The data come from the RNA Mapping Database (RMDB), library ARCHII. An RNA of 207 nucleotides, treated with 2A3 and DMS and read out base by base. 2A3 adducts were read by reverse transcription with SuperScript II with manganese. Values cover nucleotides 27 to 156.
RNA sequence: GGGAACGACUCGAGUAGAGUCGAAAACGUCUGGGUCCCGCGCAAUGGGAUUCCGUGAACCCUGUCAGGUCCGGAAGGAAGCAGCAGUAAGCGGAUGCUCCCAUGUGCCGCGGGGACGCCUGGGCUGAGCAAAGGACAGAGCGUUCGCGCUCUGUCCCUGUAUACCACUGUUCGCAGUGGUAUACAGAAAAGAAACAACAACAACAAC
Reactivity to 2A3 in 0.01 (KOAc 150mM, MgCl2 10mM, bicine 150mM(pH8.5), 24C), signal-to-noise 2, nucleotides 027 to 156: c050g010u010c000u010g000g010g170u300c000c010c000g000c020g000c000a010a010u010g000g000g010a020u040u040c000c010g000u030g040a030a030c080c020c010u010g060u060c020a030g000g030u000c000c010g080g160a110a090g020g000a020a000g020c010a000g010c000a010g000u030a060a020g010c000g000g030a020u090g120c040u050c020c020c010a030u140g130u040g100c130c050g020c010g000g000g000g070a020c040g030c000c000u020g000g000g010c030u080g030a040g100c130a120a080a030g000g000a000c000a000g000a000g000c010g040u120u140c180g010c010g030c080u000c000u000g000u000c000c000
Reactivity to DMS in 0.01 (KOAc 150mM, MgCl2 10mM, bicine 150mM(pH8.5), 24C), signal-to-noise 1, nucleotides 027 to 156: c120g060u000c020u010g000g020g020u000c020c000c010g000c070g020c040a070a050u000g000g000g030a130u000u000c000c020g050u000g020a230a110c050c030c010u020g020u000c040a120g040g000u000c010c010g090g090a140a190g010g040a060a230g010c010a150g010c040a060g010u000a080a300g000c000g000g010a080u000g000c280u000c000c000c000a030u000g010u000g070c040c050g030c000g000g000g050g000a020c070g000c000c000u000g020g000g010c000u000g000a070g000c090a050a210a170g010g000a080c020a020g030a030g040c010g000u010u010c300g030c000g060c000u010c000u000g000u000c000c000